[RMDB]
RNA sequence: GGGAACGACUCGAGUAGAGUCGAAAAUUGAAUGUAUAGUUUUACUCCUGGAAAGGAGCUAGACUUGUCUGUGUUUGAAGCACUUACGCUGAUGAUCGCUUUUGCGACAUUAGUCGUGCUGAUACUAUUGCCGCCUAAUGUUCGCAUUAGGCGGCAAAAAAGAAACAACAACAACAAC
Reactivity to DMS in 0.01 (KOAc 150mM, MgCl2 10mM, bicine 150mM(pH8.5), 24C), signal-to-noise 2, nucleotides 027 to 126: u000u010g000a110a100u060g010u000a000u070a010g010u000u020u040u010a170c010u000c000c000u030g000g080a090a160a010g000g000a000g000c070u000a000g000a010c010u000u010g020u000c000u010g000u020g000u030u020u020g000a270a050g000c000a000c010u060u000a060c300g000c000u000g000a020u000g010a110u000c000g000c000u000u000u000u000g030c020g050a010c000a000u000u000a000g010u000c250g020u000g030c000u000g010a140u000a030c080u000a230
Source: RMDB libraries RFM100 and RFMREP, as collected in RNAgym. Structure probing data (DMS) for a 177-nucleotide construct. The RNA was probed in 150 mM KOAc, 10 mM MgCl2 and 150 mM bicine (pH 8.5) at 24 C. For DMS the reverse transcriptase was MarathonRT.